[RMDB]
RNA sequence: GGGAACGACUCGAGUAGAGUCGAAAAAAAAAUAGCGAUUCUCGUUAUAGUUGAGUCCUUCGAGGAUUGCUAAGCAAAGAUGGAGAACUAUCAAUGAACGUCUUUGAGGACAUUUCUAUACAAAAAAUCAUACGCUUUAGUUCGCUAAAGCGUAUGAAAAAGAAACAACAACAACAAC
Reactivity to DMS in 0.01 (KOAc 150mM, MgCl2 10mM, bicine 150mM(pH8.5), 24C), signal-to-noise 1, nucleotides 027 to 126: a020a020a030a030a020u000a050g040c020g010a020u000u040c020u000c000g020u010u000a080u000a090g020u020u000g020a150g000u000c150c040u000u000c000g000a000g010g010a000u000u000g000c000u000a020a050g000c040a060a000a130g020a040u000g000g020a150g010a100a050c110u020a130u020c100a130a130u010g000a130a140c040g020u000c000u000u020u000g000a070g010g000a050c060a090u000u000u000c000u000a110u020a050c080a000a060a070a060a080a060
Source information: Chemical mapping of a 177-nucleotide RNA with DMS. For DMS the reverse transcriptase was MarathonRT. The DMS profile rests on 811 reads. The data come from the RNA Mapping Database (RMDB), library M2PK90.